[RMDB]
RNA sequence: GGGAACGACUCGAGUAGAGUCGAAAAGCUUACAAAGCAAGAACAACCUGUAUUUUCUUUCUUCAAAAUGGUCUUGGGGAAGAAUAGGAGAGCUUCAUGAAUAAGUUACUCAAGACAACAGAUAAACACAGUAGUCAAAACUUUUUAUUGAGGAAAACGGUUUUAUUUAUUUCGAUAAAUAAAACCGAAAAGAAACAACAACAACAAC
Reactivity to 2A3 in 0.01 (KOAc 150mM, MgCl2 10mM, bicine 150mM(pH8.5), 24C), signal-to-noise 2, nucleotides 027 to 156: g000c000u080u070a070c090a080a150a010g010c060a010a040g080a180a020c080a030a020c010c010u060g040u040a130u010u140u050u030c010u010u070u010c000u020u070c050a020a060a070a100u120g040g030u010c010u000u020g000g010g050g000a070a000g060a030a040u120a230g110g010a020g010a000g090c000u100u060c140a160u150g110a170a010u070a100a000g020u040u050a040c020u000c010a010a020g020a030c010a020a050c020a050g080a130u130a080a090a020c080a020c000a060g090u090a030g030u080c020a050a050a050a120c030u140u120u000u100u160a150u080u050g040a080g010g000a020a160a000a060
Structure probing data (2A3) for a 207-nucleotide construct. Source: RMDB library OK3TST, as collected in RNAgym. Reactivities are rounded to 0.1 and cut off at 0 and 3. For 2A3 the reverse transcriptase was SuperScript II with manganese. The 2A3 profile rests on 939 reads.